Chemical mapping of a 207-nucleotide RNA with 2A3 and DMS. For 2A3 the reverse transcriptase was SuperScript II with manganese. The 2A3 profile rests on 1,211 reads. It was measured as part of the RMDB library OK3TST. DMS (dimethyl sulfate) methylates the pairing face of unpaired adenines and cytosines. The reactions ran in a buffer of 150 mM KOAc, 10 mM MgCl2 and 150 mM bicine (pH 8.5), at 24 C. The DMS profile rests on 2,654 reads.
RNA sequence: GGGAACGACUCGAGUAGAGUCGAAAAAGAGAGGGAUUAAAGUGCUUAUGCGCAAAGAAUGUGUCAACAACAGGUGUUCCUGCCUCUGCUGGCAUGAGUUAGGUGUGGCUUGGGCUGAAUCCAAAUGUGUAUUGGCACAAGAUGGAAAGCAAAGUUGAACCAAACAGGUUUUCGAACCUGUUUGGUUAAAAGAAACAACAACAACAAC
Reactivity to 2A3 in 0.01 (KOAc 150mM, MgCl2 10mM, bicine 150mM(pH8.5), 24C), signal-to-noise 2, nucleotides 027 to 156: a000g080a000g010a000g010g020g000a010u070u120a120a060a050g000u000g000c000u090u050a050u130g080c090g000c080a080a030a080g060a040a030u110g000u010g020u040c020a020a000c020a020a030c000a070g000g090u040g010u120u060c010c050u050g010c010c010u030c010u010g000c010u030g080g000c030a040u080g030a020g160u040u150a050g020g050u010g020u040g020g030c020u020u040g010g030g000c010u030g030a060a050u020c010c010a070a110a040u090g030u000g020u010a070u170u130g060g000c000a000c000a010a000g070a020u100g020g010a080a020a000g040c040a050a020a040g010u060u060g020
Reactivity to DMS in 0.01 (KOAc 150mM, MgCl2 10mM, bicine 150mM(pH8.5), 24C), signal-to-noise 2, nucleotides 027 to 156: a060g020a070g010a120g040g010g010a130u030u010a020a110a100g030u000g030c020u000u010a100u020g040c020g000c010a070a070a110g010a080a090u000g030u000g040u040c020a050a050c030a040a090c090a030g000g020u000g030u000u030c100c020u020g040c010c010u010c050u000g020c010u010g040g040c020a060u010g010a090g020u000u000a090g060g090u000g020u000g010g010c000u010u010g000g000g000c000u020g000a060a090u000c050c030a010a110a240u010g020u010g020u000a130u000u010g050g030c030a010c070a000a070g020a270u000g000g000a030a030a070g030c020a050a070a240g020u000u000g010